Structure probing data (DMS and 2A3) for a 207-nucleotide construct.
It was measured as part of the RMDB library OK3TST.
Reactivities are given for positions 27 through 156.
DMS adducts were read by reverse transcription with MarathonRT.
RNA sequence: GGGAACGACUCGAGUAGAGUCGAAAACAUGCAUAGGUCUGUGCCUGACUGCAGUGCACCCACAUGUUCACUCGAACAGGGGUACUUGGAUUGUCUUAGCCACGCUGUUCAUUUGGCCUCAGACUGAGUCCUACUGAAGUCCCAUCAUCAGUGGAAAACUAUGACAUGCAUUCGUGCAUGUCAUAGUAAAAGAAACAACAACAACAAC
Reactivity to DMS in 0.01 (KOAc 150mM, MgCl2 10mM, bicine 150mM(pH8.5), 24C), signal-to-noise 4, nucleotides 027 to 156: c050a080u000g020c050a100u020a190g010g000u000c020u000g050u000g010c020c020u000g010a110c090u010g020c010a030g000u000g030c050a090c010c000c000a110c080a130u000g000u010u000c020a200c180u000c210g010a030a040c030a070g030g020g000g040u000a030c060u000u000g030g030a160u000u000g020u000c060u000u010a130g020c010c050a070c120g000c030u000g000u000u000c060a160u000u000u000g010g010c000c020u000c030a040g010a050c010u000g010a140g020u000c030c040u000a100c020u000g000a050a120g000u000c010c010c020a190u000c060a120u000c030a040g000u010g000g010a090a090a120
Reactivity to 2A3 in 0.01 (KOAc 150mM, MgCl2 10mM, bicine 150mM(pH8.5), 24C), signal-to-noise 9, nucleotides 027 to 156: c080a070u250g050c060a100u130a170g020g010u010c020u010g040u040g010c000c010u030g060a070c040u040g010c020a020g010u020g030c050a050c010c020c000a180c050a150u050g000u010u010c040a070c230u170c210g010a020a010c010a020g010g000g000g000u040a090c080u060u080g050g030a100u130u160g130u180c060u160u180a040g030c010c000a020c030g010c020u020g050u130u070c030a080u100u080u130g010g000c020c030u090c030a010g000a030c000u020g010a020g060u010c010c020u040a050c010u010g000a020a010g060u060c010c010c000a030u100c020a010u010c000a010g030u050g030g010a060a070a010